[RMDB]
RNA sequence: GGGAACGACUCGAGUAGAGUCGAAAAACAUGUUCAACUUACCAGCAUUUGGAGAUUUGGCCAGAACAUUUGUCAGGCCAUCCAGUCUGAGUACCACCACAAAUUGGAGUCCAAAGCACGCCCCACGCCGAACUGUGAGAUUCGUCUCACAGUUCGGAAAAGAAACAACAACAACAAC
Reactivity to 2A3 in 0.01 (KOAc 150mM, MgCl2 10mM, bicine 150mM(pH8.5), 24C), signal-to-noise 1, nucleotides 027 to 126: a030c040a080u140g010u150u120c060a070a040c000u130u150a060c060c000a000g100c060a150u060u140u190g060g010a110g010a040u070u060u110g040g030c010c000a040g090a230a060c040a230u090u080u140g090u050c060a090g000g030c000c010a000u040c000c000a030g100u060c000u020g010a000g040u100a040c000c000a030c000c010a010c080a070a110a110u070u050g060g030a010g040u040c050c000a080a030a000g000c030a020c020g020c000c000c000c000a010c010g000
Reactivity to DMS in 0.01 (KOAc 150mM, MgCl2 10mM, bicine 150mM(pH8.5), 24C), signal-to-noise 1, nucleotides 027 to 126: a120c200a090u000g010u010u020c100a080a110c140u040u000a140c090c040a050g010c040a000u000u000u040g000g010a040g000a070u000u000u010g000g000c040c030a110g010a060a060c050a210u000u010u010g050u000c090a110g000g000c010c010a090u040c040c040a090g000u000c030u000g000a050g010u000a090c200c090a090c070c050a010c110a010a010a050u000u000g010g000a130g020u000c040c060a020a030a070g010c010a070c100g000c060c000c060c020a140c300g010